[RMDB]
RNA sequence: GGGAACGACUCGAGUAGAGUCGAAAACAUCUCGAUGGUCUUCCAUUCGCCGCCGAGGUCGUACUCGGUGCCGUCGACAAGCGUGACGGUGGUGGAGCCAAAGACUUCCAUUGCGACGGACUGGAUGCAUCCUGGGAGUUUUCGAACUCCCAGGAUGAAAAGAAACAACAACAACAAC
Reactivity to DMS in 0.01 (KOAc 150mM, MgCl2 10mM, bicine 150mM(pH8.5), 24C), signal-to-noise 2, nucleotides 027 to 126: c160a110u000c060u000c020g020a170u010g010g000u000c050u000u000c010c000a060u000u000c060g000c130c050g040c010c110g000a030g010g000u000c270g000u020a210c000u000c020g010g000u010g040c000c020g010u000c020g020a060c080a120a140g000c130g010u000g010a060c030g000g020u000g020g030u000g030g000a040g000c020c030a050a060a160g000a070c090u010u000c010c090a070u010u010g010c000g010a060c070g010g000a080c100u010g020g000a040u000g000
Reactivity to 2A3 in 0.01 (KOAc 150mM, MgCl2 10mM, bicine 150mM(pH8.5), 24C), signal-to-noise 2, nucleotides 027 to 126: c040a100u020c020u030c050g070a110u060g050g010u000c080u120u000c050c020a010u090u090c020g050c070c000g030c000c000g010a010g030g040u070c020g000u040a040c020u000c010g020g080u020g020c000c000g010u020c010g110a100c050a150a070g130c160g180u080g000a030c010g000g030u010g020g030u040g020g020a020g000c020c010a040a070a030g050a020c000u090u000c010c020a040u030u110g000c010g020a030c010g000g050a050c010u010g010g020a030u060g050